[RMDB]
RNA sequence: GGGAACGACUCGAGUAGAGUCGAAAAUUGUACACCUUCGGGUGUACAAGCUGUCUAGUCGCUAGCAUACGAUCAAAGCUAGCGACUAGACUUUAUUGAUCGCGACGUGCGCUUUCGAGCGCACGAAAGUUGUCUGCAUAUUCGUAUGCAGACAACUAAAAGAAACAACAACAACAAC
Reactivity to DMS in 0.01 (KOAc 150mM, MgCl2 10mM, bicine 150mM(pH8.5), 24C), signal-to-noise 1, nucleotides 027 to 126: u000u000g010u000a000c000a000c000c010u000u010c260g020g000g000u000g020u020a000c000a010a020g000c110u000g000u000c000u000a000g000u000c000g030c000u000a000g000c000a090u010a160c240g010a100u000c200a070a090a080g010c000u000a000g000c000g000a000c000u000a010g000a000c000u010u020u010a050u000u000g010a080u000c080g010c150g020a140c020g020u010g000c010g020c000u000u000u000c150g000a000g060c000g000c000a000c000g000a010a060
Structure probing data (DMS) for a 177-nucleotide construct. For DMS the reverse transcriptase was MarathonRT. It was measured as part of the RMDB library M2PK50. The RNA was probed in 150 mM KOAc, 10 mM MgCl2 and 150 mM bicine (pH 8.5) at 24 C.